The data come from the RNA Mapping Database (RMDB), library OK3TST. Chemical mapping of a 207-nucleotide RNA with 2A3.

[RMDB]
RNA sequence: GGGAACGACUCGAGUAGAGUCGAAAAGAUGGGUCCGAUGGAUUAAUGCGUCGCCAGCCAUUGGAUCCUGAUUGAUAGAUUGACGGCGACGGUCGGAUCACUCGGUAAUUCGGUGCUCAACGAGUGAUCCGUGAUGAUAGUUAAGACGAGCACCUAAAGUAAUGCUAGGUUUCGACCUAGCAUUACUAAAAGAAACAACAACAACAAC
Reactivity to 2A3 in 0.01 (KOAc 150mM, MgCl2 10mM, bicine 150mM(pH8.5), 24C), signal-to-noise 2, nucleotides 027 to 156: g120a050u080g000g000g010u000c000c000g010a000u000g010g030a080u100u070a280a060u270g070c010g000u000c000g000c000c020a000g070c020c020a010u000u000g010g000a000u000c000c000u000g000a000u060u090g060a010u000a160g210a090u010u180g070a060c110g000g000c000g000a020c010g040g010u010c000g000g000a000u000c000a000c010u000c000g120g000u100a070a140u230u190c030g010g000u000g000c000u010c000a000a010c000g000a000g000u000g070a000u000c000c000g000u000g000a000u080g000a010u040a120g110u270u190a070a040g050a090c040g000a000g000c000a000c000c000u020a050a050

The 2A3 profile rests on 1,264 reads.